The record gives the reactivity of an RNA of 177 nucleotides to 2A3 and DMS. The DMS profile rests on 3,734 reads. For 2A3, 2,714 sequencing reads were counted.
RNA sequence: GGGAACGACUCGAGUAGAGUCGAAAAGCACAUGCCGGUAUGACUCGCUCAGUCAUCGUUUGUAAUGGCUAUAAAGACCGUGAAUAUAUCCGCUUGGCAUUGAUCGGCGAAAAACUGGGCCAUAAGGCAGAGGAGGAAAGUUCGCUUUCCUCCUCUGAAAAGAAACAACAACAACAAC
Reactivity to 2A3 in 0.01 (KOAc 150mM, MgCl2 10mM, bicine 150mM(pH8.5), 24C), signal-to-noise 2, nucleotides 027 to 126: g020c020a090c070a220u300g000c000c000g070g030u080a040u120g010a010c010u000c040g010c000u000c010a000g030u020c040a050u060c030g020u000u030u080g110u060a100a060u050g030g000c020u030a030u110a200a150a020g080a170c030c010g010u030g050a140a030u190a000u010a060u110c000c030g040c190u090u240g020g000c020a050u000u040g040a050u070c010g030g000c010g050a080a010a060a010a010c040u080g040g000g000c000c020a030u040a060a030g100g000
Reactivity to DMS in 0.01 (KOAc 150mM, MgCl2 10mM, bicine 150mM(pH8.5), 24C), signal-to-noise 4, nucleotides 027 to 126: g010c040a160c200a080u020g030c020c030g010g010u010a090u000g010a040c040u000c070g020c040u000c030a030g000u000c080a110u000c060g000u000u010u010g020u010a080a040u010g010g010c010u010a140u010a080a130a090g000a090c040c030g020u000g000a150a090u020a050u000a120u010c030c030g000c190u000u010g020g000c230a060u000u000g010a100u010c050g010g000c030g000a080a040a040a070a090c170u010g010g000g020c020c020a040u010a040a070g010g010